[RMDB]
RNA sequence: GGGAACGACUCGAGUAGAGUCGAAAAGACGCUGUAGAAUGAGAGGGUGAGUUGCUUGAGGGGUAGCACAGAUAUUCCUGCCUAAUAAAUAUGUUAAAUCAAACAGGCUCAUUAGAAGCCGGAGGCUAAUGGCCGACUUACAAUAAAAUGCCGAGUCACCUCAAGUAUUCUUCGGAAUACUUGAGGUAAAAGAAACAACAACAACAAC
Reactivity to 2A3 in 0.01 (KOAc 150mM, MgCl2 10mM, bicine 150mM(pH8.5), 24C), signal-to-noise 4, nucleotides 027 to 156: g040a000c040g000c040u020g030u070a030g060a170a080u110g020a040g010a040g050g010g000u030g020a080g010u060u060g050c020u020u040g030a030g000g000g010g030u050a030g020c030a010c030a070g120a050u050a040u110u060c010c010u030g030c020c020u110a200a140u100a100a150a020u170a040u070g020u070u100a100a120a130u100c100a040a060a040c020a020g010g000c010u020c090a050u050u140a030g040a120a010g030c030c020g010g010a010g000g000c000u020a030a010u020g000g000c000c010g020a020c010u020u010a000c000a020a020u110a050a130a030a010u050g030c040c010g020a030g030u020c030
Reactivity to DMS in 0.01 (KOAc 150mM, MgCl2 10mM, bicine 150mM(pH8.5), 24C), signal-to-noise 2, nucleotides 027 to 156: g010a090c060g030c040u000g010u010a070g010a090a130u020g020a100g020a070g030g020g050u000g010a110g010u010u000g000c010u000u000g000a060g000g020g010g030u010a070g010c030a060c040a100g010a150u000a140u000u000c020c000u000g000c050c040u000a040a090u000a050a090a130u010a100u000g010u000u020a070a060a120u000c040a060a070a110c060a130g010g010c000u000c030a100u000u000a090g010a080a050g010c020c030g010g020a030g030g020c010u010a050a100u000g000g010c010c000g030a030c040u000u000a050c040a080a080u000a020a030a090a100u010g000c030c000g010a060g010u000c060